[RMDB]
RNA sequence: GGGAACGACUCGAGUAGAGUCGAAAAGAUAUGGAACGGAGUAUGCUUGAGCGCAUGGCGAACGUAUGUCGGAAACGACAUACCAGUAGCCAUGAACUACGCUCAAGCAUAUGACGUUCCUAAGUCACACUAUAGGGUAGUUCGCUACCCUAUAGUGAAAAGAAACAACAACAACAAC
Reactivity to 2A3 in 0.01 (KOAc 150mM, MgCl2 10mM, bicine 150mM(pH8.5), 24C), signal-to-noise 1, nucleotides 027 to 126: g020a010u070a070u230g000g000a000a000c010g030g000a050g010u000a000u010g000c010u000u000g000a000g010c030g010c010a000u000g010g010c020g020a010a000c010g000u000a000u000g010u000c010g010g030a080a080a080c020g010a010c000a000u000a010c010c010a010g010u010a010g000c020c010a000u010g000a000a010c010u060a010c040g000c010u010c000a000a010g010c000a000u000a000u000g000a000c000g000u000u020c000c000u000a010a010g000u020c000a010
Reactivity to DMS in 0.01 (KOAc 150mM, MgCl2 10mM, bicine 150mM(pH8.5), 24C), signal-to-noise 7, nucleotides 027 to 126: g020a040u020a300u000g010g000a000a000c000g010g000a300g010u000a010u010g000c010u000u010g010a010g010c000g010c000a000u000g000g010c010g000a130a210c300g000u000a000u000g010u000c000g020g000a150a100a250c010g020a020c000a010u000a000c010c030a060g020u000a130g000c010c000a000u000g010a080a080c180u010a300c020g000c000u000c000a000a000g000c000a000u000a000u000g010a300c020g010u000u000c000c000u010a000a060g000u000c040a230
Structure probing data (2A3 and DMS) for a 177-nucleotide construct. 2A3 adducts were read by reverse transcription with SuperScript II with manganese. The data come from the RNA Mapping Database (RMDB), library TTRINS. Conditions: 150 mM KOAc, 10 mM MgCl2 and 150 mM bicine (pH 8.5), 24 C.